[RMDB]
RNA sequence: GGGAACGACUCGAGUAGAGUCGAAAAGAUAUGGAUGUCCCUGUACUCGCAAGCCGAAGAACGUCCAGAUAAUCGGAAACGAUUAUCUGGACGGGAGGCUUGACCCGAGGACAAGACAUCCUAAGUCCAAUAGGACGUCCUUCGGGACGUCCUAUUGAAAAGAAACAACAACAACAAC
Reactivity to DMS in 0.01 (KOAc 150mM, MgCl2 10mM, bicine 150mM(pH8.5), 24C), signal-to-noise 1, nucleotides 027 to 126: g010a100u000a300u000g010g000a000u010g000u000c030c130c100u000g020u010a100c000u000c030g000c020a010a000g010c000c000g040a110a170g010a160a230c010g000u000c000c020a010g010a020u000a000a000u000c000g010g000a190a100a220c010g040a030u000u000a000u000c010u000g000g000a000c000g060g000g020a120g010g020c000u000u000g000a070c260c210c110g010a010g020g000a050c200a110a250g000a020c010a000u000c000c010u000a040a040g000u000c050